Chemical mapping of a 177-nucleotide RNA with 2A3 and DMS. 2A3 adducts were read by reverse transcription with SuperScript II with manganese. DMS adducts were read by reverse transcription with MarathonRT.

[RMDB]
RNA sequence: GGGAACGACUCGAGUAGAGUCGAAAACCAGUGUGAGUCCUAGCAUUGCAGGAGGGGAGACCCUGGAGGAGAGAGCCCGCCUCAAUUGAUGCCUGCAGAUUGAAUUUCCAGAGGCUUAGGAGGAGGAAGGUAACACAAGGUUCGCCUUGUGUUACCUAAAAGAAACAACAACAACAAC
Reactivity to 2A3 in 0.01 (KOAc 150mM, MgCl2 10mM, bicine 150mM(pH8.5), 24C), signal-to-noise 3, nucleotides 027 to 126: c000c000a010g020u030g010u050g070a040g070u030c000c040u040a020g040c010a050u030u110g010c040a040g010g060a010g000g000g040g010a080g050a030c010c000c010u030g000g010a040g040g000a010g010a010g000a000g030c010c000c000g030c010c010u040c000a060a140u100u140g030a050u090g020c010c010u020g020c000a000g000a080u030u150g030a050a190u060u060u090c010c020a060g020a030g060g000c000u050u050a100g000g020a030g000g030a020g030g040a070
Reactivity to DMS in 0.01 (KOAc 150mM, MgCl2 10mM, bicine 150mM(pH8.5), 24C), signal-to-noise 3, nucleotides 027 to 126: c000c000a110g020u010g020u000g020a130g000u010c010c020u000a080g000c070a060u010u020g000c050a020g020g000a080g020g010g000g010a180g000a140c060c030c020u000g020g020a050g000g000a090g020a070g000a080g030c070c010c040g010c010c020u010c010a100a090u020u000g010a160u030g000c000c000u000g000c060a060g010a100u010u000g000a110a130u020u000u000c020c070a120g000a110g010g000c030u010u050a050g000g000a100g000g000a100g000g010a160